Conditions: 150 mM KOAc, 10 mM MgCl2 and 150 mM bicine (pH 8.5), 24 C. An RNA of 177 nucleotides, treated with 2A3 and DMS and read out base by base. It was measured as part of the RMDB library TTRDEL. Reactivities are given for positions 27 through 126.
[RMDB]
RNA sequence: GGGAACGACUCGAGUAGAGUCGAAAAGAUAUGGAGCGUGCCAGGGAGAGCAAAGUCGGAAACGACAAGCUCGAGGAUCUGGGCACGCUCCUAAGUCAAAACUCUGCCUGGUUCGCCAGGCAGAGAACUUAAAUCUUUCGUUCGCGAAAGAUUUAAGAAAAGAAACAACAACAACAAC
Reactivity to 2A3 in 0.01 (KOAc 150mM, MgCl2 10mM, bicine 150mM(pH8.5), 24C), signal-to-noise 1, nucleotides 027 to 126: g010a000u070a000u120g010g000a020g000c010g010u000g010c000c010a030g010g080g040a100g000a020g000c030a010a180a020g000u000c000g020g000a050a030a040c010g000a000c010a000a040g010c000u000c010g010a120g010g030a060u040c020u070g040g130g080c000a000c000g020c010u000c000c010u000a000a000g000u000c000a020a030a050a040c010u000c000u000g000c000c000u030g000g030u060u050c160g040c090c000a010g000g000c000a000g000a000g010a000a000
Reactivity to DMS in 0.01 (KOAc 150mM, MgCl2 10mM, bicine 150mM(pH8.5), 24C), signal-to-noise 3, nucleotides 027 to 126: g000a050u000a290u000g000g000a000g020c010g020u000g020c010c000a050g000g020g020a080g010a010g000c010a030a120a160g010u000c000g020g000a060a070a170c010g000a010c000a040a300g010c000u000c010g000a100g010g020a020u000c000u010g000g000g010c010a010c000g020c000u000c000c020u000a000a060g000u000c030a080a100a080a160c000u000c000u000g000c000c000u000g000g000u000u020c240g010c000c000a010g000g010c010a010g000a000g010a030a040